Notes
Source: RMDB libraries RFM100 and RFMREP, as collected in RNAgym. Structure probing data (DMS and 2A3) for a 177-nucleotide construct. DMS adducts were read by reverse transcription with MarathonRT.
RNA sequence: GGGAACGACUCGAGUAGAGUCGAAAAAUGGGUAAGUAGAUUGAGGUAAUUAUGCGCCAGCUCGUUACUGAGAAUAUUCGUGCCGUCAUUAAUCCGCAGAAUGCAAAUCCCCACCGGGGCGGAUGCCCAGAGUGAGCUACUUCGGUAGCUCACUCUGAAAAGAAACAACAACAACAAC
Reactivity to DMS in 0.01 (KOAc 150mM, MgCl2 10mM, bicine 150mM(pH8.5), 24C), signal-to-noise 6, nucleotides 027 to 126: a050u010g000g000g010u000a040a050g000u010a050g000a090u010u020g000a150g010g010u010a050a050u010u020a080u020g010c020g000c100c090a090g010c020u000c160g010u010u020a060c060u020g010a190g010a090a070u020a080u020u010c060g010u010g000c020c010g010u020c050a050u000u000a090a080u010c030c020g020c020a060g010a070a050u010g020c110a040a050a100u010c010c000c000c030a160c130c050g010g000g000g020c020g000g010a060u010g010c040c070
Reactivity to 2A3 in 0.01 (KOAc 150mM, MgCl2 10mM, bicine 150mM(pH8.5), 24C), signal-to-noise 6, nucleotides 027 to 126: a020u090g040g010g020u070a070a050g010u020a040g040a200u040u060g020a030g020g040u040a040a080u110u130a040u120g020c030g020c010c010a020g010c020u010c050g030u040u050a070c040u050g020a020g050a120a080u090a070u130u100c020g030u080g020c000c000g030u060c010a030u010u150a080a100u020c010c010g000c010a030g080a140a020u120g040c030a060a020a080u070c020c000c010c000a040c030c040g000g000g020g000c020g040g030a050u140g020c000c010